[RMDB]
RNA sequence: GGGAACGACUCGAGUAGAGUCGAAAACGUACAAGUGUUGAAUAUCUUUAGGUACCACAUGAUGCCAAUGAUCAUCUUGACUAAUGAUUGAUGUUCUAAUAGAUGUACCACUUGCAAACUGAUGGUGAUGUCCACCUAAGUUCGCUUAGGUGGACAUAAAAGAAACAACAACAACAAC
Reactivity to 2A3 in 0.01 (KOAc 150mM, MgCl2 10mM, bicine 150mM(pH8.5), 24C), signal-to-noise 3, nucleotides 027 to 126: c050g060u150a010c020a070a040g020u040g070u120u110g120a110a050u040a030u060c040u080u050u070a050g000g000u060a040c000c020a050c040a080u120g030a040u080g040c020c050a050a080u070g010a030u060c010a000u010c010u050u060g040a080c040u110a180a030u120g100a110u040u130g020a040u070g000u040u000c000u010a070a090u050a220g040a030u030g000u070a150c000c010a000c030u020u030g000c070a130a030a010c040u050g050a120u130g070g070u070g040
Reactivity to DMS in 0.01 (KOAc 150mM, MgCl2 10mM, bicine 150mM(pH8.5), 24C), signal-to-noise 3, nucleotides 027 to 126: c070g050u020a120c060a040a050g010u000g010u000u000g000a100a070u010a040u000c010u000u010u000a040g020g000u010a040c040c030a100c030a020u000g000a150u000g010c030c040a040a030u000g010a100u000c120a080u000c090u000u000g000a090c130u000a160a020u000g000a100u000u010g010a080u000g010u000u000c010u000a040a030u000a040g010a030u000g010u000a070c080c010a030c030u000u000g000c070a010a040a200c110u010g000a080u000g020g010u020g000